[RMDB]
RNA sequence: GGGAACGACUCGAGUAGAGUCGAAAACUGCCCCAGGCCCUCCAGGGUCUUGAGGGUGUCAGCCACCUUGGCGGCGAUGCCCUGGAGCGGCUUAGGCACCUCGGCGUGGGUCUUGAGGUGAUCCACAACCUCGGACAGCUUACGGCCUGACAGGCUGCCAAGAUACGAGUUUCGACUCGUAUCUUGGAAAAGAAACAACAACAACAAC
Reactivity to 2A3 in 0.01 (KOAc 150mM, MgCl2 10mM, bicine 150mM(pH8.5), 24C), signal-to-noise 3, nucleotides 027 to 156: c020u080g010c000c010c000c030a020g030g150c030c020c030u000c000c000a000g000g010g000u000c050u030u110g090a090g060g030g000u080g080u040c030a050g010c000c000a150c030c130u120u260g060g010c020g000g010c030g070a040u150g000c000c000c000u000g000g000a010g010c130g060g000c010u010u020a020g000g000c040a050c020c050u050c010g030g010c040g000u120g000g050g010u060c030u080u300g000a010g000g000u000g040a100u050c030c000a050c030a090a050c000c000u040c030g040g000a030c010a000g030c020u050u160a070c030g030g000c010c010u030g080a060c070a080g000g040c010u040g030